This 177-nucleotide RNA was probed chemically with DMS. For DMS the reverse transcriptase was MarathonRT. Conditions: 150 mM KOAc, 10 mM MgCl2 and 150 mM bicine (pH 8.5), 24 C. Values cover nucleotides 27 to 126. It was measured as part of the RMDB library M2PK50.
RNA sequence: GGGAACGACUCGAGUAGAGUCGAAAAAACUACUUCUUCGGAAGUAGUUAUUGCGUGGGUCUAAUAAGCCCAAGGUGCCAGGUUCGACCCUUGCUGGGCGCUUCACCGACCGAUUCGUCGGUCGGAAACAAACCUGGAUUUUCGAAUCCAGGUUUGUAAAAGAAACAACAACAACAAC
Reactivity to DMS in 0.01 (KOAc 150mM, MgCl2 10mM, bicine 150mM(pH8.5), 24C), signal-to-noise 1, nucleotides 027 to 126: a040a000c000u020a000c000u000u000c000u000u000c170g050g000a040a010g000u000a000g000u000u000a010u000u000g020c070g010u000g000g020g000u020c000u000a120a060u010a170a220g000c000c000c000a090a060g010g030u020g010c000c080a080g010g000u000u000c080g000a080c000c000c020u000u000g040c030u000g000g020g000c050g000c060u000u000c060a230c020c000g000a000c000c000g010a030u000u000c160g010u010c000g030g000u000c010g010g000a030a070